An RNA of 177 nucleotides, treated with 2A3 and DMS and read out base by base.
RNA sequence: GGGAACGACUCGAGUAGAGUCGAAAAGAUAUGGAUACUGUAGGGAGUCGGUCGGAAACGACCCGACUUUGAUCUACAUGUAUCCUAAGUCAAAACACUGUUCGCUAGUUCGCUAGCGAACAGUGAAGCUAAAUCUUAGGUUCGCCUAAGAUUUAGCAAAAGAAACAACAACAACAAC
Reactivity to 2A3 in 0.01 (KOAc 150mM, MgCl2 10mM, bicine 150mM(pH8.5), 24C), signal-to-noise 3, nucleotides 027 to 126: g020a020u060a010u100g000g000a000u010a010c010u010g010u010a010g040g170g020a010g000u000c000g000g000u010c000g020g020a080a050a040c010g000a020c040c170c030g020a010c000u110u050u160g060a060u050c010u010a000c010a010u260g010u000a000u000c000c010u000a050a020g010u000c010a010a000a130a120c010a000c000u000g000u000u010c000g010c000u000a010g030u060u060c300g000c180u000a000g010c000g010a000a000c000a000g000u000g000a000a000
Reactivity to DMS in 0.01 (KOAc 150mM, MgCl2 10mM, bicine 150mM(pH8.5), 24C), signal-to-noise 3, nucleotides 027 to 126: g020a040u000a290u000g000g000a010u000a000c000u000g010u000a010g010g030g010a000g010u000c000g010g000u000c010g000g000a100a060a150c000g010a010c040c060c040g020a000c000u000u000u000g000a080u010c000u000a000c000a020u010g010u000a010u000c000c000u000a010a090g010u010c020a100a090a140a240c010a000c000u000g000u000u000c000g010c000u010a010g010u000u020c220g020c010u000a000g000c000g010a000a000c010a000g020u000g000a050a090
The DMS profile rests on 4,205 reads. For 2A3 the reverse transcriptase was SuperScript II with manganese. For DMS the reverse transcriptase was MarathonRT. The reactions ran in a buffer of 150 mM KOAc, 10 mM MgCl2 and 150 mM bicine (pH 8.5), at 24 C. The data come from the RNA Mapping Database (RMDB), library TTRDEL.